[RMDB]
RNA sequence: GGGAACGACUCGAGUAGAGUCGAAAACAAGGCCAGGACAUCAGGGGAGUUGAGCGUCGGGCUCUCUCCCCUCCACUGGGUGGUCUGGUCCGAGUGUGGGCCACCAGGAAGGGCGUGGCCUCAGGCCAGGUUUACUGAAUUUCGAUUCAGUAAACCUAAAAGAAACAACAACAACAAC
Reactivity to 2A3 in 0.01 (KOAc 150mM, MgCl2 10mM, bicine 150mM(pH8.5), 24C), signal-to-noise 5, nucleotides 027 to 126: c040a040a060g010g000c000c010a000g020g010a020c010a050u070c070a040g010g000g010g010a000g020u150u060g030a010g010c050g140u300c180g270g300g000c000u000c000u000c000u000c000c000c000c000u010c000c000a030c050u100g090g000g050u020g000g020u000c010u020g010g010u040c000c060g050a110g040u170g010u120g020g010g000c010c000a020c010c010a040g180g100a080a160g150g050g000c110g020u010g000g010c000c010u010c020a030g020g060c030c030
Reactivity to DMS in 0.01 (KOAc 150mM, MgCl2 10mM, bicine 150mM(pH8.5), 24C), signal-to-noise 9, nucleotides 027 to 126: c070a150a180g010g010c010c000a040g010g000a050c030a040u010c100a050g010g010g010g010a020g010u010u000g010a010g020c020g020u010c300g010g020g010c000u000c000u000c000u000c010c000c000c000u000c040c070a100c140u010g010g010g020u000g000g010u000c020u000g010g010u000c020c030g010a160g010u000g020u010g000g010g010c010c000a020c000c030a130g000g010a140a110g000g010g010c160g020u000g000g000c000c000u000c090a070g010g010c060c080